[RMDB]
RNA sequence: GGGAACGACUCGAGUAGAGUCGAAAAACUUGUAUAGGCGAUUAACAAAUCUUCUGUAAAUGCUGUAAGAGGAUUACCCCUUGAGGUUUCAGCACUAGGCUGCUCUAGCGAUUAAUCAAUGCAUUUGUAACGGAAAGACAGUUCGCUGUCUUUCCAAGCCUAUGUACAAGUUCGCUUGUACAUAGGCAAAAGAAACAACAACAACAAC
Reactivity to DMS in 0.01 (KOAc 150mM, MgCl2 10mM, bicine 150mM(pH8.5), 24C), signal-to-noise 1, nucleotides 027 to 156: a120c050u010u030g020u000a110u010a100g030g030c010g020a130u000u000a070a070c060a010a090a080u000c020u020u000c000u000g000u010a090a070a080u000g020c050u000g010u000a220a140g000a020g000g010a120u010u000a040c020c000c000c040u000u010g000a110g010g000u010u010u000c080a050g010c020a030c000u010a080g010g010c020u010g010c130u000c020u000a080g030c040g010a140u000u000a060a090u000c050a070a120u000g010c030a140u000u010u000g010u000a090a160c140g010g000a030a010a030g020a040c010a020g040u000u000c300g050c030u020g030u000c020u000u000u000c000c010a040a160
Reactivity to 2A3 in 0.01 (KOAc 150mM, MgCl2 10mM, bicine 150mM(pH8.5), 24C), signal-to-noise 2, nucleotides 027 to 156: a010c040u100u070g040u020a150u060a110g090g070c040g060a090u160u130a080a080c060a040a170a060u070c040u180u030c030u100g050u080a090a080a020u050g040c030u020g030u070a080a000g050a000g130g010a010u020u080a040c010c000c000c090u020u070g050a060g120g000u070u040u230c030a000g010c010a010c040u070a060g190g000c020u030g030c000u070c010u020a020g000c030g100a070u070u150a030a010u060c090a040a110u090g030c020a010u000u070u080g070u070a030a020c060g000g000a000a000a000g010a000c000a000g020u070u070c060g010c090u000g000u000c020u000u000u000c000c000a000a000